[RMDB]
RNA sequence: GGGAACGACUCGAGUAGAGUCGAAAAAUUAAAAAUCCUUAUGGAUCUGCCAUAAUUCUUGUUCUAGUUAUUAUCGUAUUAAGUUGGGGAGGUAUUGCAAGACUUGUUCGUGGUAAAGUACUUCAAGCUCCCAAAUAGUAUUCGUACUAUUUGGGAGAAAAGAAACAACAACAACAAC
Reactivity to DMS in 0.01 (KOAc 150mM, MgCl2 10mM, bicine 150mM(pH8.5), 24C), signal-to-noise 5, nucleotides 027 to 126: a100u020u010a030a080a110a130a080u000c010c000u000u010a080u010g000g010a100u000c130u010g020c020c020a050u000a050a100u020u000c040u010u000g010u000u010c040u000a110g010u010u000a060u000u000a070u000c070g020u000a060u010u000a030a080g010u010u010g010g020g000g000a080g010g000u000a040u000u010g020c070a040a070g000a060c100u000u000g000u000u000c100g020u000g000g010u000a040a080a080g000u000a060c070u000u000c090a070a130g010
Reactivity to 2A3 in 0.01 (KOAc 150mM, MgCl2 10mM, bicine 150mM(pH8.5), 24C), signal-to-noise 1, nucleotides 027 to 126: a000u170u100a110a080a060a080a050u070c030c010u110u190a120u090g060g030a020u020c040u060g050c000c000a050u040a080a090u140u000c030u030u160g100u100u000c030u030a040g120u060u050a090u170u000a060u080c010g040u040a080u130u140a190a080g130u220u120g070g030g010g100a100g010g030u060a070u120u060g000c040a000a040g000a070c030u000u010g030u080u080c150g000u000g000g000u060a070a050a170g000u000a090c020u040u020c010a010a000g070
The record gives the reactivity of an RNA of 177 nucleotides to DMS and 2A3. The RNA was probed in 150 mM KOAc, 10 mM MgCl2 and 150 mM bicine (pH 8.5) at 24 C. For 2A3 the reverse transcriptase was SuperScript II with manganese. It was measured as part of the RMDB library OK2TRN. For 2A3, 590 sequencing reads were counted.